An RNA of 177 nucleotides, treated with 2A3 and DMS and read out base by base. Values cover nucleotides 27 to 126. DMS adducts were read by reverse transcription with MarathonRT. The DMS profile rests on 4,629 reads. Source: RMDB library OK2TST, as collected in RNAgym.
[RMDB]
RNA sequence: GGGAACGACUCGAGUAGAGUCGAAAAACAGACUCUGGUGCAUUCGCUUACCCGUUUCGCACCUUUGCAUAAGACACUGACAAUGCAUGUGAGUCUGUGAAAGCUUCUGAGAAGUCUCGUCCAGGCAGUACUAAUACGCGUUCGCGCGUAUUAGUACAAAAGAAACAACAACAACAAC
Reactivity to 2A3 in 0.01 (KOAc 150mM, MgCl2 10mM, bicine 150mM(pH8.5), 24C), signal-to-noise 3, nucleotides 027 to 126: a000c000a000g010a010c000u000c030u060g010g000u000g010c010a010u020u000c010g030c050u060u100a070c030c000c000g020u000u020u050c100g010c000a010c000c000u030u040u010g000c000a000u030a090a060g080a050c060a020c240u060g090a060c100a100a030u020g000c010a000u030g070u030g130a010g000u010c010u010g000u000g030a050a000a000g020c040u060u040c050u090g160a160g010a150a040g030u050c030u060c120g050u020c020c020a010g030g060c050a030
Reactivity to DMS in 0.01 (KOAc 150mM, MgCl2 10mM, bicine 150mM(pH8.5), 24C), signal-to-noise 5, nucleotides 027 to 126: a010c030a020g000a020c000u000c000u010g010g030u000g020c010a030u000u000c020g040c030u000u020a150c220c300c010g010u000u000u000c130g020c020a020c030c010u000u000u000g000c020a030u010a100a090g010a130c180a100c180u010g010a130c160a080a030u000g010c010a020u000g010u010g010a020g000u000c010u000g010u000g000a040a100a120g010c030u010u000c040u020g020a180g010a070a080g020u000c030u000c070g020u000c020c030a100g010g000c130a100